[RMDB]
RNA sequence: GGGAACGACUCGAGUAGAGUCGAAAAGUGGUGACGCGUUUACUGAAGUGCCUGUGUUGCGUGGUGCCUUUUUUAGUGCUAGCAGGCGCCGCAAGCGUCGGCGCCUACGAACACGCGACCACGAUGCCUUGGUGCAUUAGUUCGCUAAUGCACCAAGAAAAGAAACAACAACAACAAC
Reactivity to 2A3 in 0.01 (KOAc 150mM, MgCl2 10mM, bicine 150mM(pH8.5), 24C), signal-to-noise 3, nucleotides 027 to 126: g050u040g000g010u050g050a070c020g040c030g060u060u090u070a100c050u050g050a080a020g040u040g060c000c020u080g010u030g050u200u180g060c110g000u040g050g020u010g000c000c000u110u100u040u010u050u180a130g020u110g100c050u010a030g070c000a000g010g020c000g000c010c000g000c030a120a120g080c030g090u090c000g010g010c000g010c030c000u010a020c010g010a050a000c030a000c040g010c010g010a020c000c010a000c010g000a030u140g030c000
Reactivity to DMS in 0.01 (KOAc 150mM, MgCl2 10mM, bicine 150mM(pH8.5), 24C), signal-to-noise 5, nucleotides 027 to 126: g040u010g010g000u020g010a110c040g020c050g020u000u000u000a120c100u000g020a090a100g010u000g010c000c010u010g010u020g020u010u000g020c120g040u000g020g020u010g000c010c030u000u000u000u020u010u010a090g020u010g000c070u000a260g020c090a020g010g000c000g020c010c000g030c030a150a100g020c190g010u010c090g000g010c000g020c000c010u000a010c040g010a070a130c110a020c010g010c040g000a070c020c030a040c060g000a130u000g000c080